RNA sequence: GGGAACGACUCGAGUAGAGUCGAAAAAAAAGUCGGUGCGUGCGGGCAGGAGCGGGGCGAUCGUGCGUCCCGCUCGAUGCGAGGAUGUCGCACGCCGCGCAGGAACUCGGCAUCCCCAGCCUGGCCACCGCUAAAUACCGUUCGCGGUAUUUAGCGGAAAAGAAACAACAACAACAAC
Reactivity to DMS in 0.01 (KOAc 150mM, MgCl2 10mM, bicine 150mM(pH8.5), 24C), signal-to-noise 1, nucleotides 027 to 126: a030a070a000a080g000u020c000g020g010u010g010c110g000u000g000c040g000g000g010c000a130g000g000a030g010c000g000g010g010g010c020g000a160u010c250g000u010g030c000g000u000c000c000c000g030c000u000c020g000a060u000g030c090g000a090g020g010a050u010g000u010c000g020c170a150c220g010c050c060g000c150g000c070a110g000g000a090a100c080u000c030g010g000c030a080u010c020c030c000c040a150g010c020c010u010g000g000c030c040a100